The data come from the RNA Mapping Database (RMDB), library TTRDES. This 177-nucleotide RNA was probed chemically with DMS and 2A3. For 2A3, 2,225 sequencing reads were counted. The RNA was probed in 150 mM KOAc, 10 mM MgCl2 and 150 mM bicine (pH 8.5) at 24 C. 2A3 is a SHAPE reagent: it acylates the 2'-hydroxyl of flexible nucleotides of all four kinds.
RNA sequence: GGGAACGACUCGAGUAGAGUCGAAAAGAUAUGGACGUGGUCACUCGCGAUAAGCUGGUGUCGGAAACGACAUACAGCUUUUGACGCGAGUGCCACGUCCUAAGUCAAAUCCAGGUUCGCCUGGAAACUUGUUAUGCUCGUUCGCGAGCAUAACAAGAAAAGAAACAACAACAACAAC
Reactivity to DMS in 0.01 (KOAc 150mM, MgCl2 10mM, bicine 150mM(pH8.5), 24C), signal-to-noise 2, nucleotides 027 to 126: g030a020u000a300u000g000g000a050c000g020u000g020g000u000c010a020c000u000c000g020c000g000a110u000a030a020g010c000u000g000g010u000g000u000c000g040g000a180a090a220c000g060a010c000a030u000a130c010a010g000c000u010u000u000u000g010a170c050g030c030g000a010g010u000g000c000c020a000c000g010u010c010c000u000a000a090g010u020c060a140a080a170u000c000c010a030g000g000u000u040c300g020c000c000u010g000g000a000a060a120
Reactivity to 2A3 in 0.01 (KOAc 150mM, MgCl2 10mM, bicine 150mM(pH8.5), 24C), signal-to-noise 1, nucleotides 027 to 126: g010a020u140a020u200g010g000a000c000g000u000g000g060u300c090a000c010u020c030g000c010g040a060u020a130a020g000c010u030g010g000u020g010u020c020g060g010a040a050a040c040g010a000c030a010u300a270c000a010g000c030u000u030u030u040g080a040c010g000c000g040a000g000u000g000c020c020a000c000g000u050c000c000u020a000a000g000u000c010a000a000a080u030c000c000a000g050g010u070u030c240g060c100c020u060g000g040a080a000a000